[RMDB]
About this RNA
The data come from the RNA Mapping Database (RMDB), library RNAMAK. The record gives the reactivity of an RNA of 207 nucleotides to 2A3. Conditions: 150 mM KOAc, 10 mM MgCl2 and 150 mM bicine (pH 8.5), 24 C.

RNA sequence: GGGAACGACUCGAGUAGAGUCGAAAACAAACGCUGGGUACUACAAAGUCCGACGAAGAGCCUCCCCACCACAGCUGAAGCGCGCACGGCUGUGAGGGCUCAGAGGACAAAAAGGUACCUGUGCUGAAGCGCGCACGGCAACCGAAAGGUGCGACAACCAGUAAAGCAUCUUCGGAUGCUUUACUGGAAAAGAAACAACAACAACAAC
Reactivity to 2A3 in 0.01 (KOAc 150mM, MgCl2 10mM, bicine 150mM(pH8.5), 24C), signal-to-noise 1, nucleotides 027 to 156: c020a030a120a030c060g020c020u080g000g000g000u000a020c040u070a050c120a120a260a090g010u010c020c040g130a300c020g000a300a000g010a000g000c020c000u030c040c070c000c000a040c000c000a000c000a000g000c020u010g050a260a010g030c000g000c000g000c020a000c000g010g030c000u000g000u000g000a000g000g000g000c000u000c000a000g000a000g000g010a000c010a000a300a000a000a000g050g000u000a000c000c000u000g010u010g000c000u010g020a110a020g010c010g000c000g000c000a020c000g020g010c010a000a000c010c000g050a140a020a030g000g050u000g000c000g150a020c030a010a100